[RMDB]
RNA sequence: GGGAACGACUCGAGUAGAGUCGAAAAUCUGAGCAGGUUCAUCUGGGGACGAGCCUGGCACAGGAAUCUGACAAGGGUGAUAUUUUAACCCACGAUAGUGGCCAAGUCUCUAGGUAGAUUAUUGGUGGGAAGUGGAAUUGUAGUUUUCACUGGGGAGUCUUAAACGUCUUUUCGAAGACGUUUAAGAAAAAGAAACAACAACAACAAC
Reactivity to 2A3 in 0.01 (KOAc 150mM, MgCl2 10mM, bicine 150mM(pH8.5), 24C), signal-to-noise 2, nucleotides 027 to 156: u040c020u030g010a010g000c010a010g000g020u020u010c000a070u020c090u170g010g000g020g030a020c040g020a040g030c060c000u050g060g000c040a000c000a080g040g050a070a010u040c050u150g040a030c090a090a080g010g000g000u050g020a010u030a120u150u210u050u080a120a090c020c010c040a020c010g020a020u070a070g070u070g080g040c010c010a060a030g020u000c000u010c020u090a040g030g090u100a040g010a070u010u070a050u160u120g050g000u040g000g010g030a040a010g000u040g030g030a020a030u060u100g030u080a060g040u010u020u060u130c050a020c030u000g000g000g010g000a010g000
Reactivity to DMS in 0.01 (KOAc 150mM, MgCl2 10mM, bicine 150mM(pH8.5), 24C), signal-to-noise 1, nucleotides 027 to 156: u000c050u010g000a130g020c050a080g020g040u010u000c010a030u000c010u000g010g000g000g030a070c080g000a080g010c000c000u000g030g010c040a060c050a060g030g010a110a130u010c030u000g010a130c070a040a170g000g020g030u010g000a240u000a030u000u010u010u010a110a160c020c000c000a080c070g000a140u000a120g040u020g020g000c040c010a040a120g020u000c010u000c030u000a060g040g020u000a060g010a080u000u000a050u000u010g040g050u010g000g020g000a080a090g040u010g030g000a020a050u010u010g010u000a150g020u000u000u000u000c020a040c040u000g000g030g000g020a150g000
Notes: Chemical mapping of a 207-nucleotide RNA with 2A3 and DMS. The RNA was probed in 150 mM KOAc, 10 mM MgCl2 and 150 mM bicine (pH 8.5) at 24 C. The 2A3 profile rests on 1,090 reads. Source: RMDB library OK3TST, as collected in RNAgym.